Chemical mapping of a 177-nucleotide RNA with DMS. Conditions: 150 mM KOAc, 10 mM MgCl2 and 150 mM bicine (pH 8.5), 24 C. Values cover nucleotides 27 to 126.
RNA sequence: GGGAACGACUCGAGUAGAGUCGAAAAUGGCAUACGGAUCUGCUGACAUGUUUUACUACCCAGCUCACCAACAAGUGGCGUAGUACCAUUCGUCAAGACACUCAUCGCUACUUGCUUUGCGGCACAAUACUGACGGACCAUUCGUGGUCCGUCAGUAAAAAGAAACAACAACAACAAC
Reactivity to DMS in 0.01 (KOAc 150mM, MgCl2 10mM, bicine 150mM(pH8.5), 24C), signal-to-noise 1, nucleotides 027 to 126: u020g000g010c070a040u010a050c100g010g040a050u010c040u010g010c050u000g000a050c120a000u000g000u010u000u030u000a050c060u000a180c020c010c020a080g050c030u000c050a120c040c060a080a020c130a040a020g010u000g000g000c150g000u000a060g030u020a020c200c050a050u000u000c160g000u010c190a130a140g000a060c130a040c070u000c060a060u020c020g000c030u000a020c010u010u020g000c120u000u000u000g010c110g020g000c040a070c150a040a130